[RMDB]
RNA sequence: GGGAACGACUCGAGUAGAGUCGAAAAGUUACACCGGUCAAAACAUCCGACCAGGGAAGAAUGGCUGAAUGAUAAAGCGCGCUCCCAUCAGGCUUUACUUGAAAGAAAAGGGUGUUGACGCCGUUUAAUAGCCCAGUAUGUUCGCAUACUGGGCUAUAAAAGAAACAACAACAACAAC
Reactivity to DMS in 0.01 (KOAc 150mM, MgCl2 10mM, bicine 150mM(pH8.5), 24C), signal-to-noise 2, nucleotides 027 to 126: g060u030u030a090c160a240c220c030g010g020u000c070a130a120a060a050c030a030u000c020c030g000a110c080c010a030g010g050g000a060a050g000a170a030u000g010g010c030u010g000a100a100u010g050a120u000a010a090a060g010c040g050c050g020c050u000c030c010c010a120u030c110a040g010g010c050u000u000u000a010c050u000u000g000a080a170a110g000a100a120a070a140g040g010g000u000g000u000u000g000a250c300g010c010c030g020u000u000u000a090

Chemical mapping of a 177-nucleotide RNA with DMS.